[RMDB]
Source information
The record gives the reactivity of an RNA of 177 nucleotides to 2A3 and DMS. The reactions ran in a buffer of 150 mM KOAc, 10 mM MgCl2 and 150 mM bicine (pH 8.5), at 24 C. For 2A3 the reverse transcriptase was SuperScript II with manganese. It was measured as part of the RMDB library TTRDEL. For DMS the reverse transcriptase was MarathonRT. For DMS, 4,617 sequencing reads were counted.

RNA sequence: GGGAACGACUCGAGUAGAGUCGAAAAGAUAUGGAUGAGGGACAUGCUGUCCGGUCGGAAACGACCGAGCAGCAACAGCCCUGGUCCUAAGUCAAAAUCAAUGAACACCUUCGGGUGUUCAUUGAAAGAAACUCAAUAUCUUCGGAUAUUGAGUUUCAAAAGAAACAACAACAACAAC
Reactivity to 2A3 in 0.01 (KOAc 150mM, MgCl2 10mM, bicine 150mM(pH8.5), 24C), signal-to-noise 2, nucleotides 027 to 126: g010a020u070a020u150g010g020a010u080g250a030g010g040g000a060c080a170u090g000c010u010g030u020c010c000g000g010u010c010g020g030a080a080a040c010g000a000c000c000g020a010g000c000a010g000c010a020a010c030a020g060c000c000c000u030g100g010u010c000c010u020a110a030g040u040c030a020a030a020a250u030c010a000a010u000g010a000a000c010a010c040c000u050u100c300g080g010g000u000g000u000u000c010a000u010u000g020a010a000a020
Reactivity to DMS in 0.01 (KOAc 150mM, MgCl2 10mM, bicine 150mM(pH8.5), 24C), signal-to-noise 4, nucleotides 027 to 126: g000a050u000a300u010g000g000a010u000g010a020g000g010g010a050c080a150u010g010c010u000g010u000c030c000g010g000u000c000g000g000a090a110a160c000g010a010c000c000g010a030g000c000a000g010c000a020a030c280a180g000c000c000c000u000g000g000u000c000c010u000a050a120g010u000c030a090a100a120a190u000c000a000a010u000g000a000a000c000a010c000c000u000u010c210g030g000g030u010g010u000u010c000a000u000u000g000a020a090a090